This 177-nucleotide RNA was probed chemically with DMS and 2A3.
Conditions: 150 mM KOAc, 10 mM MgCl2 and 150 mM bicine (pH 8.5), 24 C.
For DMS the reverse transcriptase was MarathonRT.
[RMDB]
RNA sequence: GGGAACGACUCGAGUAGAGUCGAAAAAUAAAGAGCGUAAACGCGUCAUUGAGUGACGUGAAGAUCAUCCAAGUGUCCUGUCUACAGUCGUAGAUAGCGCACAUUACGCUAAGAUGAUCAUAAAAAAACAGACAACGAGUUUCGACUCGUUGUCUGUAAAAGAAACAACAACAACAAC
Reactivity to DMS in 0.01 (KOAc 150mM, MgCl2 10mM, bicine 150mM(pH8.5), 24C), signal-to-noise 2, nucleotides 027 to 126: a040u000a030a080a070g020a060g010c000g020u000a000a060a230c100g000c000g000u010c000a010u000u010g000a140g000u000g000a010c010g010u010g010a160a130g010a010u000c000a000u010c000c100a040a110g010u000g000u010c300c000u020g010u000c000u010a010c000a170g040u020c210g000u000a010g000a000u000a000g010c300g020c000a000c030a080u020u000a010c000g020c010u000a070a100g000a010u000g010a020u000c010a180u040a000a000a040a040a100a110
Reactivity to 2A3 in 0.01 (KOAc 150mM, MgCl2 10mM, bicine 150mM(pH8.5), 24C), signal-to-noise 2, nucleotides 027 to 126: a000u250a010a090a030g110a010g020c010g070u060a010a100a050c030g040c000g000u000c000a000u030u290g180a140g280u040g000a000c000g000u010g040a060a040g000a010u000c010a000u020c010c030a090a010g000u000g040u060c020c000u000g000u000c020u010a020c070a280g220u300c130g000u130a000g030a000u000a000g060c070g010c010a000c000a010u030u050a030c010g000c010u010a030a000g000a030u030g000a000u030c040a010u210a000a060a000a020a000a000